Conditions: 150 mM KOAc, 10 mM MgCl2 and 150 mM bicine (pH 8.5), 24 C. Structure probing data (2A3 and DMS) for a 177-nucleotide construct. For DMS, 29,487 sequencing reads were counted. Reactivities are given for positions 27 through 126.
[RMDB]
RNA sequence: GGGAACGACUCGAGUAGAGUCGAAAAGGAGAGUAGAUGAUUCGCGUUAAGUGUGUGUGAGUGGGAUGUCUUCACACAACGAAGCGAGAGCGCGGUGAAUCAUGGCAUCAGCUCCAAAGAAAGAAAACAUAUCAUGCAUAUUCGUAUGCAUGAUAUGAAAAGAAACAACAACAACAAC
Reactivity to 2A3 in 0.01 (KOAc 150mM, MgCl2 10mM, bicine 150mM(pH8.5), 24C), signal-to-noise 9, nucleotides 027 to 126: g020g010a030g000a010g040u190a030g010a050u010g010a010u020u020c000g000c010g030u040u090a150a070g020u080g010u010g000u010g000u010g130a080g070u100g000g130g040a060u100g100u060c010u010u010c020a000c000a000c000a020a030c040g050a080a020g050c040g040a050g030a010g030c020g000c010g010g050u070g040a010a010u010c010a010u020g040g020c030a040u010c020a050g020c000u000c000c010a040a070a020g140a010a070a010g120a010a080a010a000
Reactivity to DMS in 0.01 (KOAc 150mM, MgCl2 10mM, bicine 150mM(pH8.5), 24C), signal-to-noise 8, nucleotides 027 to 126: g010g000a020g010a080g010u030a150g010a030u000g010a020u000u010c020g010c000g010u000u030a070a130g010u020g020u000g020u010g000u000g000a010g020u010g010g010g010a080u020g000u020c020u020u000c000a000c020a010c000a020a010c030g010a130a120g030c080g010a160g010a110g000c010g020c020g000g020u020g020a040a010u000c010a020u000g010g010c050a060u010c040a210g000c010u000c000c010a100a080a120g010a080a070a120g010a110a080a080a170